[RMDB]
Source information:
The data come from the RNA Mapping Database (RMDB), library OK1LIB. An RNA of 177 nucleotides, treated with 2A3 and DMS and read out base by base.
RNA sequence: GGGAACGACUCGAGUAGAGUCGAAAACGAACUACCUGCCUCUGCCUGCGGUUCGGGCCGCAUAUCCUGAAUAUUGCGGGAAACAGGGGAAGAACAGGCGGCAGAUACGGACAGCCAAAUGAUAAAAGAUAAAUACUCCAUUCGUGGAGUAUUUAUCAAAAGAAACAACAACAACAAC
Reactivity to 2A3 in 0.01 (KOAc 150mM, MgCl2 10mM, bicine 150mM(pH8.5), 24C), signal-to-noise 9, nucleotides 027 to 126: c020g040a020a020c050u080a080c030c000u020g020c000c000u030c000u030g020c010c000u060g010c010g000g000u020u040c020g020g070g050c030c010g140c050a070u090a040u150c000c020u030g020a060a020u170a100u160u280g040c010g010g020g000a020a060a040c020a030g000g000g030g050a030a020g050a060a020c020a010g030g030c000g030g000c020a010g020a050u100a070c060g040g040a070c050a030g060c030c020a080a100a080u190g090a050u110a130a120a020a030
Reactivity to DMS in 0.01 (KOAc 150mM, MgCl2 10mM, bicine 150mM(pH8.5), 24C), signal-to-noise 6, nucleotides 027 to 126: c080g000a160a120c090u010a080c050c000u000g010c030c020u000c010u000g010c010c030u010g040c040g020g010u000u020c060g010g010g020c120c070g020c090a070u020a070u010c010c040u000g020a060a080u000a100u050u040g010c010g010g000g000a150a100a190c100a100g000g000g010g000a110a050g020a090a170c040a010g010g010c100g000g000c040a040g000a130u020a040c080g010g000a100c080a110g010c040c030a040a090a130u030g010a100u010a060a070a130a100